[RMDB]
The record gives the reactivity of an RNA of 207 nucleotides to DMS and 2A3. The RNA was probed in 150 mM KOAc, 10 mM MgCl2 and 150 mM bicine (pH 8.5) at 24 C. High 2A3 reactivity points to a flexible backbone, as in loops and unpaired stretches. The 2A3 profile rests on 1,382 reads.
RNA sequence: GGGAACGACUCGAGUAGAGUCGAAAAGGGAAUGGGGAAAUGUUGAAUAUCUAAGAGGUCCUUUGGCUUCAUUCCAAGUUUAGAGGAAAGAGCACCAUUCAGGACUCGUUCUGGGCUGCUCCGCGUGUGUUAAAGGGCACUGGAAAUCAGGCUGUCCCAUGACAAUCGUAUUCGUACGAUUGUCAUGAAAAGAAACAACAACAACAAC
Reactivity to DMS in 0.01 (KOAc 150mM, MgCl2 10mM, bicine 150mM(pH8.5), 24C), signal-to-noise 2, nucleotides 027 to 156: g020g000g000a080a020u000g020g030g030g020a060a130a070u000g010u000u000g000a060a160u010a100u010c080u010a120a130g020a090g000g010u010c010c020u010u000u010g010g010c030u000u020c010a160u010u000c070c030a040a100g010u020u000u010a110g010a210g040g010a060a040a080g010a110g040c040a040c000c030a130u010u010c090a100g040g000a160c010u000c130g000u000u010c010u010g050g010g030c040u000g020c040u000c020c050g000c090g000u000g030u010g020u000u010a070a020a070g030g010g020c020a040c040u010g050g020a060a050a110u000c020a080g020g020c050u000g000u000c010c010
Reactivity to 2A3 in 0.01 (KOAc 150mM, MgCl2 10mM, bicine 150mM(pH8.5), 24C), signal-to-noise 2, nucleotides 027 to 156: g000g030g010a040a140u160g000g020g000g010a030a140a130u110g000u150u070g060a110a070u110a090u140c060u080a120a090g010a060g080g000u030c010c000u000u040u070g000g000c000u090u040c040a100u080u000c040c020a060a020g020u090u190u180a060g020a000g030g010a050a080a020g030a020g020c050a040c000c030a050u160u150c090a030g000g000a030c000u070c140g050u070u040c020u010g020g030g000c010u030g010c010u070c010c010g080c030g040u050g000u000g000u020u080a090a110a030g020g020g010c040a000c040u010g000g080a000a150a000u190c020a020g060g000c010u030g010u030c010c010